[RMDB]
RNA sequence: GGGAACGACUCGAGUAGAGUCGAAAAAUUUAGAAAUAAAUAGAGUGAAACGCGGUAAACCCCUCAAGCUAGCAACCCAAAUUAGGUAGGGGCACAUGAUGUGUAGCAAUACAACAUCAUGCAAGAUCAGCUGAUAAGUAUUCGUACUUAUCAGCUGAAAAGAAACAACAACAACAAC
Reactivity to DMS in 0.01 (KOAc 150mM, MgCl2 10mM, bicine 150mM(pH8.5), 24C), signal-to-noise 2, nucleotides 027 to 126: a060u010u030u010a020g010a110a040a120u030a030a010a050u000a070g010a060g000u080g000a130a050a090c140g050c000g000g000u020a080a090a300c010c000c000c000u000c030a090a220g020c010u010a020g010c090a090a110c000c010c000a050a050a070u020u030a020g000g020u000a050g000g020g000g020c300a180c000a000u000g010a000u000g000u000g020u000a000g010c280a070a110u000a020c020a000a000c000a000u000c000a000u000g000c120a140a070g000a140u010
Reactivity to 2A3 in 0.01 (KOAc 150mM, MgCl2 10mM, bicine 150mM(pH8.5), 24C), signal-to-noise 2, nucleotides 027 to 126: a000u090u080u060a020g050a030a080a010u090a050a050a040u100a050g070a030g110u040g060a040a030a040c110g000c030g040g060u070a030a100a110c010c000c000c000u010c020a040a050g030c000u050a000g000c010a010a180c000c000c000a050a110a110u190u090a060g090g040u090a000g000g000g000g000c010a010c000a010u010g000a030u000g000u000g000u000a000g050c010a010a030u030a000c150a230a020c000a100u010c000a000u000g010c020a030a000g000a090u000
Structure probing data (DMS and 2A3) for a 177-nucleotide construct. For 2A3, 2,120 sequencing reads were counted. For DMS, 1,700 sequencing reads were counted. For DMS the reverse transcriptase was MarathonRT.